[RMDB]
RNA sequence: GGGAACGACUCGAGUAGAGUCGAAAAGAGAGGGUAACCACCGGCGUGCGUCACUGAUAUAUCCACCGGGGGGUAAGGGGAGAAAAGGAUACAGCGCGACGAAGUUAGCACGCUGCCCCGUAAGGCUUGAAGAGUGUAGUGUUCGCACUACACUCAACAUAAGACAUCCGUUCGCGGAUGUCUUAUGAAAAGAAACAACAACAACAAC
Reactivity to DMS in 0.01 (KOAc 150mM, MgCl2 10mM, bicine 150mM(pH8.5), 24C), signal-to-noise 2, nucleotides 027 to 156: g020a120g000a080g000g010g020u000a050a110c070c030a080c030c010g000g050c040g020u000g000c040g000u000c030a140c090u020g030a040u010a120u000a110u000c020c030a130c030c040g000g020g000g040g000g020u020a040a040g000g010g030g010a170g000a070a060a120a070g010g010a140u010a050c060a040g010c000g010c060g040a120c010g010a080a130g010u000u000a140g000c020a030c020g020c000u000g010c000c020c030c020g000u010a040a090g030g000c030u030u000g010a120a260g020a030g010u000g010u000a010g000u000g020u000u010c290g000c040a040c000u000a000c000a010c000u000c000a000a040
Reactivity to 2A3 in 0.01 (KOAc 150mM, MgCl2 10mM, bicine 150mM(pH8.5), 24C), signal-to-noise 3, nucleotides 027 to 156: g120a000g020a040g010g000g010u080a040a050c040c020a060c040c050g020g000c020g010u020g010c040g060u050c020a000c090u030g060a010u050a010u010a030u160c030c030a060c130c060g050g010g000g000g000g040u060a040a040g060g030g000g010a050g040a020a110a020a020g020g010a010u030a090c030a020g020c080g020c050g110a050c030g020a070a010g050u080u110a010g080c000a000c030g000c000u020g010c000c000c000c000g000u050a040a060g030g020c040u120u110g100a110a040g010a070g020u000g010u000a000g010u010g010u030u040c170g030c070a000c000u010a000c000a000c000u000c000a010a000
This 207-nucleotide RNA was probed chemically with DMS and 2A3. For 2A3, 2,210 sequencing reads were counted. For 2A3 the reverse transcriptase was SuperScript II with manganese.